[RMDB]
RNA sequence: GGGAACGACUCGAGUAGAGUCGAAAAGUAUUCAUUCUCCUUUCUCGAUAGAGAUUGGAGUCAUACGACCCCAGAAACCAUUCCUUAUACCUUGAGUAUUGCUGAAUUCAGUUUAGCGUGCAUGCUCUUAAUGGGUGCACCUUCGGGUGCACCCAAAGAUACUAACACGUUUCGACGUGUUAGUAUCAAAAGAAACAACAACAACAAC
Reactivity to DMS in 0.01 (KOAc 150mM, MgCl2 10mM, bicine 150mM(pH8.5), 24C), signal-to-noise 2, nucleotides 027 to 156: g000u010a080u010u010c070a270u010u010c000u000c000c000u000u010u000c000u000c000g020a300u010a140g020a020g010a020u010u000g010g030a050g040u010c240a060u010a070c010g000a300c030c000c000c050a130g000a160a090a070c060c020a220u000u000c010c050u000u000a090u000a080c050c030u020u010g000a090g030u000a070u010u000g000c010u000g000a040a100u000u000c120a070g000u000u000u010a080g000c060g050u000g020c040a080u000g010c010u000c010u000u000a090a170u000g000g010g040u000g000c020a030c010c000u000u000c300g060g000g020u010g030c000a010c010c000c010a010a000a020
Reactivity to 2A3 in 0.01 (KOAc 150mM, MgCl2 10mM, bicine 150mM(pH8.5), 24C), signal-to-noise 4, nucleotides 027 to 156: g010u020a030u110u130c080a110u200u030c020u010c000c000u020u010u010c020u010c010g240a300u200a300g000a000g000a010u000u000g000g000a000g010u000c010a010u010a020c020g040a050c010c000c010c000a020g130a100a120a040c090c030a080u110u220c050c020u160u110a070u100a300c020c020u090u170g000a010g000u010a040u140u120g010c030u040g020a100a090u170u160c050a150g150u050u070u100a030g010c010g010u060g020c020a020u010g000c000u030c000u080u100a180a070u070g000g010g000u010g010c000a000c000c010u020u060c180g060g010g000u000g020c000a000c000c000c000a000a010a000